This 177-nucleotide RNA was probed chemically with 2A3 and DMS. It was measured as part of the RMDB library TTRDES. High DMS reactivity at an A or C suggests that its Watson-Crick edge is free. 2A3 adducts were read by reverse transcription with SuperScript II with manganese. For 2A3, 5,198 sequencing reads were counted. For DMS, 3,722 sequencing reads were counted.
RNA sequence: GGGAACGACUCGAGUAGAGUCGAAAAAAAAGAUAUGGAGUCCUGUGCUCUUGGAUUUAUGGGUGAAAUUAUAUCGGAAACGAUAUAUAAGUAACCCAUUGUCAGAGCUGGGACUCCUAAGUCAAAACAAUGAUAGAUUGUUCGCAAUCUAUCAUUGAAAAGAAACAACAACAACAAC
Reactivity to 2A3 in 0.01 (KOAc 150mM, MgCl2 10mM, bicine 150mM(pH8.5), 24C), signal-to-noise 3, nucleotides 027 to 126: a000a000a030a080g080a040u130a070u180g030g000a000g000u010c020c000u090g190u290g070c010u020c030u100u230g130g030a110u300u300u280a000u070g000g020g000u000g000a010a010a000u030u010a000u000a010u010c000g030g000a120a060a020c010g010a000u000a000u000a000u010a020a000g020u010a000a000c000c000c000a000u010u000g010u000c010a000g000a000g000c000u010g020g000g000a000c000u000c000c010u000a000a000g010u000c000a000a010a040a060
Reactivity to DMS in 0.01 (KOAc 150mM, MgCl2 10mM, bicine 150mM(pH8.5), 24C), signal-to-noise 3, nucleotides 027 to 126: a040a110a110a110g000a030u000a300u010g010g000a030g010u000c000c000u000g000u000g010c010u000c000u000u000g030g010a010u010u000u000a010u000g010g000g020u020g010a160a210a200u010u000a000u000a000u010c000g010g000a200a090a240c000g010a010u000a000u000a000u000a000a030g000u000a050a030c010c020c000a000u000u000g000u000c000a060g010a020g000c000u000g010g010g010a000c000u000c010c000u000a010a030g020u010c020a110a080a110a220